[RMDB]
RNA sequence: GGGAACGACUCGAGUAGAGUCGAAAACGCAAUUGGAAUGCCCGUGGAAGUUGAUCCGGUCGAAGCUGUUGGAUAUACUGGGCUAUUCGAGACAGCGAAAGUGCUUGGGUCUACUUGAGAUCUAAAACGUAGCACUAGCAUUCGUGCUAGUGCUACGAAAAGAAACAACAACAACAAC
Reactivity to 2A3 in 0.01 (KOAc 150mM, MgCl2 10mM, bicine 150mM(pH8.5), 24C), signal-to-noise 3, nucleotides 027 to 126: c050g040c030a100a250u120u220g120g090a100a010u140g030c000c010c000g050u090g090g140a020a000g010u020u030g000a010u030c010c020g020g020u010c030g090a050a000g010c010u020g010u100u060g030g000a040u000a010u030a100c080u150g060g110g000c060u010a020u030u030c040g050a090g040a060c050a020g000c000g050a100a040a010g130u150g040c030u120u260g040g000g000u000c000u010a010c000u000u040g060a040g000a160u020c020u120a030a000a050a000
Reactivity to DMS in 0.01 (KOAc 150mM, MgCl2 10mM, bicine 150mM(pH8.5), 24C), signal-to-noise 2, nucleotides 027 to 126: c140g000c120a070a230u020u030g000g000a050a060u020g010c000c000c080g010u000g000g060a000a070g000u030u000g000a020u000c030c000g000g050u000c030g000a080a220g010c020u050g000u020u020g010g030a120u040a000u000a020c060u010g030g000g010c180u000a000u000u000c030g010a250g020a010c000a080g000c000g000a130a130a090g000u040g000c000u000u000g050g000g030u000c000u020a030c040u000u010g030a100g000a090u000c000u030a040a140a120a070